[RMDB]
RNA sequence: GGGAACGACUCGAGUAGAGUCGAAAAGAUAUGGACACGGUCAGCGUAAGGCCGAAGAACUGUGUAACAAGUGGUCGGAAACGACCACCGCCCACAGGGAGGCUAUCGCUGACCGUGUCCUAAGUCAGACCCAUAUAGACUUCGGUCUAUAUGGGUCAAAAGAAACAACAACAACAAC
Reactivity to DMS in 0.01 (KOAc 150mM, MgCl2 10mM, bicine 150mM(pH8.5), 24C), signal-to-noise 4, nucleotides 027 to 126: g000a030u010a300u010g000g010a020c020a000c010g000g000u000c010a000g000c000g040u020a120a270g000g000c010c000g000a120a120g000a190a210c010u000g000u010g020u000a060a120c190a270a080g000u000g030g020u000c000g020g010a110a070a260c010g020a010c010c010a000c000c050g000c300c220c000a030c010a020g000g000g010a040g020g040c000u000a300u000c010g010c010u000g010a000c000c000g000u000g000u010c000c010u000a010a080g000u010c060a190